[RMDB]
RNA sequence: GGGAACGACUCGAGUAGAGUCGAAAAGAAGUGGCAGGGACAUGCCCCACAAGCUCGUUCUACCAACAUAUGUUUGGGUAGUUCGAGCGAUUAGUCUUGACGAGCGUCCUCUCGCGUCUUGACGAGAGGGAAGGAGCAGGUUCGCCUGUUCCUUCCCAAAAGAAACAACAACAACAAC
Reactivity to 2A3 in 0.01 (KOAc 150mM, MgCl2 10mM, bicine 150mM(pH8.5), 24C), signal-to-noise 9, nucleotides 027 to 126: g100a080a020g030u070g050g010c050a020g060g030g040a100c020a040u080g040c000c000c010c010a090c030a050a030g000c000u000c000g010u000u000c000u000a010c010c000a060a040c050a080u300a040u180g140u070u080u060g120g010g000u000a000g000u000u000c000g000a000g000c000g000a000u010u070a020g010u010c010u010u040g030a020c010g010a010g030c020g040u030c010c000u020c000u010c010g030c010g030u010c010u020u050g020a030c020g000a020g020a040
Reactivity to DMS in 0.01 (KOAc 150mM, MgCl2 10mM, bicine 150mM(pH8.5), 24C), signal-to-noise 8, nucleotides 027 to 126: g010a100a090g020u020g000g000c050a080g000g010g010a090c090a130u030g000c010c010c010c060a060c190a110a130g000c000u000c000g000u000u000c000u000a000c000c000a040a020c050a200u040a100u030g020u010u000u010g010g010g020u010a000g020u000u000c000g000a000g020c000g010a010u030u020a070g000u000c020u000u000g010a080c030g000a090g000c070g010u010c010c010u000c030u020c060g000c060g000u000c040u000u000g000a060c030g000a100g010a190
Chemical mapping of a 177-nucleotide RNA with 2A3 and DMS. It was measured as part of the RMDB library OK1LIB. The DMS profile rests on 34,916 reads. The RNA was probed in 150 mM KOAc, 10 mM MgCl2 and 150 mM bicine (pH 8.5) at 24 C. For DMS the reverse transcriptase was MarathonRT.